[RMDB]
RNA sequence: GGGAACGACUCGAGUAGAGUCGAAAAAGGAGUUCGCUCCUCAAUAACCGUAGGUGCCUACCCACCUUCUACCACAGCUAUGAAGAACGCUUCGAAAGAGGCGUUUGGAGCUGUGAUGAAGAGGGCACCUAAACGGACUGCGGCCAUUCGUGGCCAAUGAGUACCAGUAGUUCGCUACUGGUACUCAAAAAGAAACAACAACAACAAC
Reactivity to 2A3 in 0.01 (KOAc 150mM, MgCl2 10mM, bicine 150mM(pH8.5), 24C), signal-to-noise 4, nucleotides 027 to 156: a000g030g010a020g010u120u120c180g130c100u030c040c020u050c040a150a300u200a220a070c000c000g000u000a010g000g020u010g000c010c030u110a230c050c020c000a040c010c010u000u000c000u040a060c030c000a000c000a010g000c000u030a110u300g030a040a010g010a010a000c000g010c000u000u000c000g030a060a060a030g000a010g000g000c000g000u000u000u000g000g020a000g020c010u000g010u000g000a000u010g000a000a000g010a010g000g010g000c000a000c000c000u000a010a000a000c000g020g010a010c050u160g030c130g020g020c010c000a020u040u070c210g090u080g010g000c000c020a020a060
Reactivity to DMS in 0.01 (KOAc 150mM, MgCl2 10mM, bicine 150mM(pH8.5), 24C), signal-to-noise 1, nucleotides 027 to 156: a060g000g010a050g030u000u000c180g060c000u020c020c000u000c020a090a220u020a100a040c040c010g000u000a010g040g040u010g000c000c000u000a040c020c030c030a300c190c010u050u000c000u050a040c010c020a000c000a040g020c000u000a170u050g000a170a300g000a000a000c000g010c000u000u000c000g010a130a180a140g010a010g050g000c020g020u000u000u000g000g010a000g000c000u000g050u030g010a030u000g000a030a140g010a300g040g000g030c050a010c010c020u000a000a000a030c000g000g000a200c080u000g000c010g070g020c040c000a060u030u000c210g020u020g010g020c000c000a010a230